An RNA of 177 nucleotides, treated with DMS and 2A3 and read out base by base. High 2A3 reactivity points to a flexible backbone, as in loops and unpaired stretches.

RNA sequence: GGGAACGACUCGAGUAGAGUCGAAAAAUAAACCGCGUAGGGAACCAAGCCUUGAGUUCUGGAGACCCACGGUACAAGGCUUGGUUCUAGACAUGUGGGUCUCGAGUCCCACUCCCUACGCCAAAAACUCUAUAGUAAGCUUCGGCUUACUAUAGAGAAAAGAAACAACAACAACAAC
Reactivity to DMS in 0.01 (KOAc 150mM, MgCl2 10mM, bicine 150mM(pH8.5), 24C), signal-to-noise 3, nucleotides 027 to 126: a060u000a060a100a090c130c190g010c010g020u000a000g010g000g010a050a030c000c000a000a000g000c010c010u000u010g000a230g020u000u000c070u000g000g000a110g000a100c060c020c030a090c030g010g010u000a100c030a030a010g000g000c010u000u010g000g000u000u010c030u010a020g000a090c180a060u000g010u000g000g000g000u000c060u000c130g000a190g010u000c000c000c010a070c080u000c020c010c000u000a010c010g010c000c170a000a060a070a100a060
Reactivity to 2A3 in 0.01 (KOAc 150mM, MgCl2 10mM, bicine 150mM(pH8.5), 24C), signal-to-noise 3, nucleotides 027 to 126: a030u080a020a050a040c030c020g000c000g010u010a000g010g010g020a000a000c010c000a000a010g000c000c000u170u060g080a150g160u220u080c020u070g080g020a140g100a170c010c010c020a010c020g020g020u100a030c020a010a000g000g010c000u010u010g010g010u000u000c000u010a000g020a010c050a070u140g000u010g010g020g020u010c080u060c070g030a050g050u040c000c000c000a000c020u040c000c000c000u000a000c000g000c000c000a000a110a010a030a040